[RMDB]
RNA sequence: GGGAACGACUCGAGUAGAGUCGAAAAUGUCUUCACUAGUACACUGAGGGCUGCCAUUAAGUUCUAUGUGCAGGGAUCCAAGGCAGGCCCUAGGUCUCUUGGUGAGUGCUACUCCUCCUUACAAUUUGCUGCCCGGAGCAACAUUGGGUGACAGAAAAUGCGAUAGCGUAUUCGUACGCUAUCGCAUAAAAGAAACAACAACAACAAC
Reactivity to 2A3 in 0.01 (KOAc 150mM, MgCl2 10mM, bicine 150mM(pH8.5), 24C), signal-to-noise 1, nucleotides 027 to 156: u080g050u000c030u060u080c090a030c040u060a000g050u090a040c150a050c080u010g120a010g000g050g010c000u000g000c000c000a130u160u120a110a060g030u020u080c060u160a080u200g120u090g040c070a030g000g000g010a020u010c020c020a060a060g120g000c020a060g050g120c040c000c000u000a000g010g010u050c060u000c010u110u030g010g000u010g080a070g030u130g040c030u030a120c010u010c000c000u000c050c000u080u080a040c040a030a220u010u060u040g020c020u110g020c000c040c040g010g060a060g100c020a070a070c010a050u070u070g010g000g020u070g110a000c010a030g020a050a160a040
Source: RMDB library OK3TST, as collected in RNAgym. Structure probing data (2A3) for a 207-nucleotide construct. Reactivities are given for positions 27 through 156. The RNA was probed in 150 mM KOAc, 10 mM MgCl2 and 150 mM bicine (pH 8.5) at 24 C.